[RMDB]
RNA sequence: GGGAACGACUCGAGUAGAGUCGAAAAGCCUUGCCGAGCAGGACUUCCAGCGGCAUGUCCACCGGCUUGUUGUCGAAAUGGCUGUCGGCGACGGUCAGCUGGCGCUGCUCGAUGGCCUCGCCGACCAACGGUGGGGAUGAUUCGUCAUCCCCACCGUAAAAGAAACAACAACAACAAC
Reactivity to DMS in 0.01 (KOAc 150mM, MgCl2 10mM, bicine 150mM(pH8.5), 24C), signal-to-noise 2, nucleotides 027 to 126: g000c040c010u000u000g020c020c030g000a130g010c040a120g000g000a120c120u000u000c020c040a170g020c110g020g030c100a030u000g020u000c030c040a190c070c030g000g000c020u010u040g010u020u000g010u000c060g000a080a100a100u010g010g020c090u010g010u000c010g020g010c110g020a030c220g050g010u000c000a030g020c030u000g000g000c180g000c170u010g000c070u010c110g020a080u010g010g030c010c000u000c010g000c010c000g000a030c030c180a070
Reactivity to 2A3 in 0.01 (KOAc 150mM, MgCl2 10mM, bicine 150mM(pH8.5), 24C), signal-to-noise 1, nucleotides 027 to 126: g020c030c000u030u060g050c050c020g070a160g060c110a100g080g060a110c020u110u020c030c030a060g040c090g040g030c030a020u060g000u000c010c000a010c020c020g030g010c010u060u170g000u000u080g060u120c010g040a050a130a300u130g040g000c070u040g030u000c020g000g000c030g020a100c160g020g000u000c010a000g030c030u040g020g030c210g140c170u210g000c000u020c040g060a100u040g020g000c000c000u040c010g000c020c010g020a010c020c000a010
Description
Chemical mapping of a 177-nucleotide RNA with DMS and 2A3. For 2A3 the reverse transcriptase was SuperScript II with manganese. The reactions ran in a buffer of 150 mM KOAc, 10 mM MgCl2 and 150 mM bicine (pH 8.5), at 24 C. For DMS, 2,098 sequencing reads were counted. DMS adducts were read by reverse transcription with MarathonRT.